[RMDB]
RNA sequence: GGGAACGACUCGAGUAGAGUCGAAAAAAUACCUACUACGAUACCGCCUAAUUUUUCAACUAAUUUUAUUGCUGCUUCAAUCGUACCACCAGUAGCUAAUAAAUCAUCUGUAAUUAACACACGUUGAUCCUUCAUUAACGUUCGCGUUAAUGAAGGAAAAAGAAACAACAACAACAAC
Reactivity to 2A3 in 0.01 (KOAc 150mM, MgCl2 10mM, bicine 150mM(pH8.5), 24C), signal-to-noise 1, nucleotides 027 to 126: a000a000u190a050c030c000u060a070c030u040a070c010g010a010u040a050c020c080g060c000c050u070a120a220u120u040u000u020u050c060a030a050c010u090a020a160u030u030u000u110a110u030u090g020c010u030g070c000u080u010c060a080a180u030c060g060u050a080c000c000a010c020c000a010g030u030a010g050c000u020a010a010u020a080a060a000u000c020a010u010c020u040g020u030a090a080u090u110a070a020c010a000c000a030c270g060u040u040g020a030
Reactivity to DMS in 0.01 (KOAc 150mM, MgCl2 10mM, bicine 150mM(pH8.5), 24C), signal-to-noise 1, nucleotides 027 to 126: a060a040u010a090c010c000u010a130c080u000a080c050g010a100u010a060c090c070g000c010c020u030a060a050u010u000u020u010u000c030a050a030c070u020a090a120u020u000u000u000a030u000u010g000c000u000g000c020u010u000c060a060a060u010c040g030u010a030c030c010a050c070c040a100g050u000a050g000c010u000a050a110u000a030a030a060u000c020a010u000c020u000g010u020a020a000u000u000a080a070c090a050c090a050c070g000u010u010g010a100
Record summary: An RNA of 177 nucleotides, treated with 2A3 and DMS and read out base by base. For 2A3, 727 sequencing reads were counted. Reactivities are given for positions 27 through 126. For DMS the reverse transcriptase was MarathonRT. For 2A3 the reverse transcriptase was SuperScript II with manganese. For DMS, 884 sequencing reads were counted.